Conditions: 150 mM KOAc, 10 mM MgCl2 and 150 mM bicine (pH 8.5), 24 C. Chemical mapping of a 177-nucleotide RNA with DMS and 2A3.

[RMDB]
RNA sequence: GGGAACGACUCGAGUAGAGUCGAAAACGAGCAGACCGCUGAACGACUACGUCGGCGUGUACGCCAACGACUCCUGGGGGCCCGCCACCGUGACCUACCACGACGGCCAACUGCGCCUGUCGCUGGGCACCUUGCGUGAGUUCGCUCACGCAAGGUGAAAAGAAACAACAACAACAAC
Reactivity to DMS in 0.01 (KOAc 150mM, MgCl2 10mM, bicine 150mM(pH8.5), 24C), signal-to-noise 2, nucleotides 027 to 126: c090g000a070g010c040a070g020a060c020c000g000c030u000g000a120a020c050g000a260c210u000a040c080g010u000c030g030g000c010g030u000g030u000a070c050g010c000c010a100a110c070g000a170c130u000c040c050u000g000g000g000g020g010c030c040c040g030c050c010a130c070c040g000u010g010a080c020c070u000a070c050c020a040c030g000a040c010g010g000c000c070a230a100c220u000g000c080g000c050c020u020g050u000c050g020c070u000g000g010g020
Reactivity to 2A3 in 0.01 (KOAc 150mM, MgCl2 10mM, bicine 150mM(pH8.5), 24C), signal-to-noise 2, nucleotides 027 to 126: c020g010a050g000c030a000g030a030c010c010g000c030u030g040a130a050c020g230a160c160u300a130c250g000u030c020g000g020c010g040u170g040u030a050c010g000c000c000a040a060c050g110a080c000u000c060c010u050g040g000g000g040g000c030c030c020g020c010c030a020c020c000g090u070g070a080c000c020u010a060c020c010a000c000g000a000c010g010g020c000c010a230a210c130u130g060c080g040c070c060u090g040u070c000g000c130u000g000g010g000

The 2A3 profile rests on 2,070 reads.
The DMS profile rests on 1,106 reads.
Values cover nucleotides 27 to 126.
DMS (dimethyl sulfate) methylates the pairing face of unpaired adenines and cytosines.
It was measured as part of the RMDB library OK2TRN.